Annotation
The data come from the RNA Mapping Database (RMDB), library OK1LIB. An RNA of 177 nucleotides, treated with DMS and 2A3 and read out base by base. For 2A3 the reverse transcriptase was SuperScript II with manganese.
RNA sequence: GGGAACGACUCGAGUAGAGUCGAAAAAUUAUAGAUUUAUCAUAGAUUUCUUCUGAGUACAUUGUUCAGUUUAGUGCCUAAAAAAGAUGCAAUAACUGACUUUAUUGUAUCUCCAAUUAAAAAUGGUCAUUAAUAUCCGAUUCGUCGGAUAUUAAUGAAAAGAAACAACAACAACAAC
Reactivity to DMS in 0.01 (KOAc 150mM, MgCl2 10mM, bicine 150mM(pH8.5), 24C), signal-to-noise 1, nucleotides 027 to 126: a070u020u000a180u020a040g000a120u000u030u070a020u040c060a110u010a060g010a080u000u000u010c030u000u000c110u120g000a050g030u030a060c030a210u000u000g000u100u000c020a050g000u000u000u000a020g000u000g010c030c040u040a010a020a120a030a040a040g000a020u030g000c000a010a010u010a010a050c200u010g000a090c140u020u030u000a010u010u000g000u010a010u020c000u000c000c160a030a030u040u070a010a090a080a140a030u010g020g000u000
Reactivity to 2A3 in 0.01 (KOAc 150mM, MgCl2 10mM, bicine 150mM(pH8.5), 24C), signal-to-noise 5, nucleotides 027 to 126: a000u270u200a130u090a120g050a090u040u130u140a110u150c020a030u040a140g080a210u100u090u040c010u130u000c020u050g020a000g010u030a050c050a100u090u160g030u110u030c000a030g020u000u010u130a070g020u040g040c000c010u170a190a180a020a010a030a000g050a080u140g030c010a000a020u000a080a020c040u050g100a030c000u050u100u040a090u070u060g010u020a060u050c020u000c000c020a120a150u140u210a160a060a000a050a080u100g040g020u010